Chemical mapping of a 207-nucleotide RNA with DMS and 2A3.
The reactions ran in a buffer of 150 mM KOAc, 10 mM MgCl2 and 150 mM bicine (pH 8.5), at 24 C.
For DMS, 2,145 sequencing reads were counted.
For 2A3, 1,025 sequencing reads were counted.
[RMDB]
RNA sequence: GGGAACGACUCGAGUAGAGUCGAAAAUGGACUUUUUGCAGUUCCUACUUAUCCGGUUUUAACGCUGUUUUAUUGGCGCAAAGGUUUACGGAUAAACAACUAAUAAUUAAACCUUUUGUGUGCGAAAAUUGGACGUUUAGGUUCGCCUAAACGUCAAUCGUUUAUUCAACUUCGGUUGAAUAAACGAAAAAGAAACAACAACAACAAC
Reactivity to DMS in 0.01 (KOAc 150mM, MgCl2 10mM, bicine 150mM(pH8.5), 24C), signal-to-noise 1, nucleotides 027 to 156: u000g030g010a120c020u000u000u000u010u010g050c120a120g010u010u010c020c040u020a130c080u020u010a000u010c000c000g000g020u000u000u000u000a130a110c010g000c040u000g020u000u020u000u000a190u050u010g020g000c000g000c010a020a060a000g020g020u000u000u000a150c020g000g000a040u000a010a060a200c070a040a100c150u000a080a210u000a100a210u010u010a020a000a020c000c010u000u000u000u000g020u000g000u000g060c030g000a090a050a100a210u000u000g000g000a020c040g000u010u000u000a010g010g010u010u000c300g070c010c000u000a000a000a010c010g020u000c000a010a030
Reactivity to 2A3 in 0.01 (KOAc 150mM, MgCl2 10mM, bicine 150mM(pH8.5), 24C), signal-to-noise 2, nucleotides 027 to 156: u100g040g040a060c030u060u100u080u140u210g040c100a020g020u100u020c010c010u010a040c020u040u050a010u000c020c020g000g010u000u000u000u070a070a010c000g030c050u030g120u160u100u150u030a110u200u160g050g000c010g000c000a010a010a000g010g000u020u000u000a000c000g000g020a020u030a030a110a010c030a010a020c020u180a070a100u090a140a010u100u150a010a020a020c000c000u000u000u110u200g080u000g010u020g020c090g060a070a040a140a160u120u130g100g000a000c000g000u000u000u010a020g010g010u010u020c100g030c040c000u000a000a000a000c040g010u000c000a000a000